An RNA of 177 nucleotides, treated with 2A3 and DMS and read out base by base. 2A3 adducts were read by reverse transcription with SuperScript II with manganese. The 2A3 profile rests on 2,612 reads.

[RMDB]
RNA sequence: GGGAACGACUCGAGUAGAGUCGAAAAUAUUAUAGCGCACUAAAGACGCUGAUCUUUAGUUACCAAGGUACUUUAGUGCUGAGGUCCGAGUUCCAAGGUCCCAUGUCGGACCUUAGCACUAAUUGAAGCUAUAGCUCCUAUUCGUAGGAGCUAUAGCAAAAGAAACAACAACAACAAC
Reactivity to 2A3 in 0.01 (KOAc 150mM, MgCl2 10mM, bicine 150mM(pH8.5), 24C), signal-to-noise 3, nucleotides 027 to 126: u170a020u140u300a170u160a110g060c050g010c070a010c040u030a010a030a000g040a010c070g080c300u140g170a280u010c000u000u030u020a010g010u020u060a090c040c030a040a020g150g000u110a110c030u040u020u000a010g020u000g010c000u000g010a000g010g000u000c010c000g020a030g040u160u140c080c000a040a010g070g030u020c000c000c030a040u100g090u040c010g010g000a000c000c000u000u000a000g000c000a000c000u000a010a010u000u010g050a050a000
Reactivity to DMS in 0.01 (KOAc 150mM, MgCl2 10mM, bicine 150mM(pH8.5), 24C), signal-to-noise 3, nucleotides 027 to 126: u000a080u000u010a130u010a080g010c120g010c200a070c000u000a010a030a000g000a020c020g020c200u010g000a070u000c010u000u000u000a010g010u010u010a080c080c090a060a110g010g010u010a080c080u000u000u000a000g010u010g000c000u010g000a030g010g010u000c000c000g010a050g010u010u010c250c130a050a120g030g010u000c010c000c010a160u000g000u000c000g010g000a010c000c010u000u010a000g010c000a010c000u000a000a000u000u010g010a100a170
High DMS reactivity at an A or C suggests that its Watson-Crick edge is free.